This 177-nucleotide RNA was probed chemically with DMS. For DMS the reverse transcriptase was MarathonRT. The DMS profile rests on 3,599 reads.
RNA sequence: GGGAACGACUCGAGUAGAGUCGAAAAGAUAUGGAUUCCCAAGGAUCUCACGAGAGCGAUAAGAAGUCACAUCGGAAACGAUGUGCUUCUUUUGACGCUCGAGUGAGAUCCUUGGGAAUCCUAAGUCCAUAUAAGCAAUGUUCGCAUUGCUUAUAUGAAAAGAAACAACAACAACAAC
Reactivity to DMS in 0.01 (KOAc 150mM, MgCl2 10mM, bicine 150mM(pH8.5), 24C), signal-to-noise 2, nucleotides 027 to 126: g020a110u020a300u000g000g010a010u000u000c000c000c000a030a010g010g030a010u000c000u010c010a040c000g030a300g000a000g050c000g020a190u000a000a010g000a030a020g000u020c010a000c000a000u020c000g010g000a110a080a270c020g010a030u000g030u010g010c010u000u000c000u010u000u010u000g010a210c080g010c000u000c000g000a280g000u000g010a020g000a000u000c000c000u000u010g000g000g000a000a000u000c000c000u000a010a100g000u010c040